[RMDB]
Chemical mapping of a 207-nucleotide RNA with DMS and 2A3.
It was measured as part of the RMDB library RNAMAK.
The reactions ran in a buffer of 150 mM KOAc, 10 mM MgCl2 and 150 mM bicine (pH 8.5), at 24 C.
Reactivities are rounded to 0.1 and cut off at 0 and 3.
DMS adducts were read by reverse transcription with MarathonRT.
RNA sequence: GGGAACGACUCGAGUAGAGUCGAAAAGGAAAGGGUUCGCCCUUUCCAAAAAGCGUACUACGCAGAGGCUUGGAUUUAACGCUACCCACCUCCCAAAUAGGAGAGGCGUUUGUCAGCCUCCUGCGUAUCGCAAAAAACAUCUGGUUCGCCAGAUGAACAUUACUCCCCGGUUCGCCGGGGAGUAAUGAAAAGAAACAACAACAACAAC
Reactivity to DMS in 0.01 (KOAc 150mM, MgCl2 10mM, bicine 150mM(pH8.5), 24C), signal-to-noise 1, nucleotides 027 to 156: g010g000a030a010a020g030g010g010u010u000c300g050c000c000c000u000u030u000c000c000a010a040a060a070a070g010c010g000u000a070c090u010a000c000g040c040a100g000a080g000g050c010u000u000g000g020a100u000u000u000a000a020c000g030c030u000a030c030c010c060a300c070c010u000c000c010c030a050a140a210u000a000g000g000a050g040a120g000g000c010g030u010u010u000g000u000c010a050g000c000c010u000c050c010u000g050c020g000u000a000u010c050g000c040a000a060a090a120a090a130c010a000u000c000u000g000g020u000u010c300g010c010c000a010g000a030u000g000a120a260
Reactivity to 2A3 in 0.01 (KOAc 150mM, MgCl2 10mM, bicine 150mM(pH8.5), 24C), signal-to-noise 3, nucleotides 027 to 156: g010g000a030a000a000g040g010g020u080u110c210g120c000c000c060u000u010u040c000c050a020a050a010a000a000g030c030g000u080a070c030u000a000c020g000c010a000g000a000g000g010c070u180u200g170g000a030u300u290u170a000a000c000g020c010u060a100c040c060c020a090c040c000u010c050c030c010a190a300a200u300a110g010g000a020g000a050g010g020c020g000u000u000u030g010u000c000a000g000c000c000u010c050c010u000g000c000g000u000a000u060c000g020c000a040a050a090a000a030a070c010a010u000c000u020g010g020u060u060c200g030c080c000a000g000a000u030g000a010a010